[RMDB]
RNA sequence: GGGAACGACUCGAGUAGAGUCGAAAAGAUUGUUGACAUCGAUUAGAAACGCGGUGUCGGGCACUAGCGGGCUAUCCAUGCUCACCAUCAAGGUUGAUGAUACCAGGGCGCUGUCUUUCGGCAUGCCGCAGCCGAUACUGUUCGCAGUAUCGGCUGCAAAAGAAACAACAACAACAAC
Reactivity to 2A3 in 0.01 (KOAc 150mM, MgCl2 10mM, bicine 150mM(pH8.5), 24C), signal-to-noise 1, nucleotides 027 to 126: g060a150u220u210g100u140u110g140a070c030a070u030c060g120a030u000u100a040g170a040a110a060c300g000c000g030g040u040g100u170c050g070g000g000c060a000c000u080a100g010c030g000g000g010c000u030a040u010c000c000a000u120g030c070u010c000a140c000c000a000u170c100a150a070g060g030u000u040g000a280u030g000a040u010a000c000c030a010g000g060g060c010g010c000u110g080u110c000u030u020u030c110g000g070c000a000u010g100c000c000
Annotation: This 177-nucleotide RNA was probed chemically with 2A3. Source: RMDB library OK1LIB, as collected in RNAgym.